[RMDB]
RNA sequence: GGGAACGACUCGAGUAGAGUCGAAAAGCUUGGGGCGAUGACGCAGCAGCGGCUGAAAAGGCAUUCGAAGAUCUGGAAGACCUGCUAAACAUGAUCGAAGAAACUACGCUGGGCCGCCAUCACGCGACCAACAUCGUGAUUCCUCCGUCUAAGCGUCGAAAGAUCCCUUUUUCGAAAGGGAUCUUUCAAAAGAAACAACAACAACAAC
Reactivity to 2A3 in 0.01 (KOAc 150mM, MgCl2 10mM, bicine 150mM(pH8.5), 24C), signal-to-noise 3, nucleotides 027 to 156: g030c030u070u030g010g020g020g020c010g030a040u030g010a020c020g040c010a040g020c040a020g020c000g010g040c010u060g040a090a090a060a000g020g000c000a050u010u020c010g070a090a020g010a040u010c010u050g030g070a120a040g090a210c080c000u080g120c070u140a110a060a060c020a060u200g030a030u040c010g010a100a000g000a000a050a000c130u170a030c110g000c030u010g000g050g000c020c000g000c010c000a060u130c010a010c030g000c010g010a060c030c050a060a050c010a080u050c020g000u010g040a060u050u060c000c000u030c010c010g000u000c010u000a040a030g010c020g100u100c040
Reactivity to DMS in 0.01 (KOAc 150mM, MgCl2 10mM, bicine 150mM(pH8.5), 24C), signal-to-noise 2, nucleotides 027 to 156: g030c020u010u000g000g040g000g020c110g030a130u000g010a080c090g000c040a100g000c190a090g000c040g050g060c020u000g000a080a040a120a090g020g010c010a230u000u000c030g040a140a230g030a040u000c000u000g030g040a140a120g030a200c060c020u000g020c050u010a090a090a140c070a080u000g040a060u070c010g000a100a190g020a120a080a120c040u000a060c050g010c030u000g000g000g040c030c000g030c030c030a020u000c060a060c050g000c070g000a030c040c020a120a090c010a140u000c010g010u010g000a120u000u000c020c020u000c070c010g020u040c010u000a070a010g020c000g020u010c060